[RMDB]
RNA sequence: GGGAACGACUCGAGUAGAGUCGAAAAACCUCGAUCAGAGCUCUCUGAUCGACGGUAGAGAGCUGCUGAGGUCAUACGAAAGUAUGACCUUUGAGCACAGGCCUGUGUUCAACAGUGGAGGCCUACUGUCUUCAUACGAAAGUAUGAAGAGGUAAAACGUAUCUUCCUAGUUCGCUAGGAAGAUACGAAAAGAAACAACAACAACAAC
Reactivity to 2A3 in 0.01 (KOAc 150mM, MgCl2 10mM, bicine 150mM(pH8.5), 24C), signal-to-noise 2, nucleotides 027 to 156: a000c000c010u010c010g010a020u000c000a000g030a050g080c080u070c050u010c000u140g000a010u010c010g000a010c010g010g000u030a030g030a000g010a010g030c040u050g000c020u000g050a000g030g010u000c000a010u020a000c010g070a110a030a040g000u010a000u010g000a000c000c000u000u010u020g010a010g060c030a000c000a010g210g160c080c270u050g000u000g000u030u030c030a070a050c000a060g020u030g060g090a030g090g060c010c000u000a000c000u000g010u000c000u000u000c000a010u000a000c000g060a160a070a020g000u000a000u000g020a000a000g000a000g000g010u040a050a050a000a000
Reactivity to DMS in 0.01 (KOAc 150mM, MgCl2 10mM, bicine 150mM(pH8.5), 24C), signal-to-noise 1, nucleotides 027 to 156: a040c000c000u000c010g030a010u000c000a020g020a060g000c160u010c080u000c000u020g000a010u010c000g020a020c070g020g030u000a060g010a100g020a130g000c030u000g000c010u000g010a060g000g030u000c000a010u000a000c020g010a150a110a300g010u010a010u000g010a000c010c000u000u000u000g010a070g000c010a050c040a120g020g000c110c020u000g060u010g010u000u000c000a080a280c050a050g020u010g020g030a060g010g010c030c000u000a060c040u000g020u010c010u000u000c000a010u000a010c010g000a230a090a300g010u000a000u010g010a010a010g010a300g000g000u000a010a050a130a230

An RNA of 207 nucleotides, treated with 2A3 and DMS and read out base by base.
The data come from the RNA Mapping Database (RMDB), library OK3TST.
For 2A3, 2,127 sequencing reads were counted.
For DMS the reverse transcriptase was MarathonRT.
For 2A3 the reverse transcriptase was SuperScript II with manganese.